[RMDB]
RNA sequence: GGGAACGACUCGAGUAGAGUCGAAAAGAUAUGGAGCAUGACCCGAAACUAAGCUCAACAGCAUUCCAUCUUCUCGGAAACGAGAAGAUGGAAUGACAUGAGCGAUGUUUCGCAUGCUCCUAAGUCACGUCCUAAUUUUGUUCGCAAAAUUAGGACGAAAAGAAACAACAACAACAAC
Reactivity to 2A3 in 0.01 (KOAc 150mM, MgCl2 10mM, bicine 150mM(pH8.5), 24C), signal-to-noise 1, nucleotides 027 to 126: g080a050u160a030u280g000g020a000g000c010a010u000g050a300c050c080c030g020a000a000a000c020u120a110a070g000c000u020c020a020a060c110a110g110c000a010u010u030c020c010a000u040c000u020u000c020u000c000g070g040a110a110a080c000g000a000g000a000a000g000a010u000g000g000a000a000u000g010a000c010a030u050g000a000g000c030g000a030u190g020u010u010u010c010g020c010a000u000g000c000u000c000c000u010a020a020g010u040c010a020
Reactivity to DMS in 0.01 (KOAc 150mM, MgCl2 10mM, bicine 150mM(pH8.5), 24C), signal-to-noise 2, nucleotides 027 to 126: g050a030u000a300u000g000g000a000g020c000a000u000g000a230c270c250c080g000a010a000a020c010u010a300a300g020c010u000c010a050a150c300a140g020c000a000u000u000c000c000a000u000c010u020u000c000u020c000g000g000a120a180a190c000g000a000g000a000a010g010a000u010g010g000a010a000u000g010a020c060a150u000g000a010g000c010g030a160u000g010u010u000u000c000g000c030a000u000g000c000u000c000c000u000a000a080g010u010c030a220

Chemical mapping of a 177-nucleotide RNA with 2A3 and DMS. For DMS the reverse transcriptase was MarathonRT. The DMS profile rests on 1,464 reads. Source: RMDB library TTRINS, as collected in RNAgym. For 2A3, 3,693 sequencing reads were counted. For 2A3 the reverse transcriptase was SuperScript II with manganese.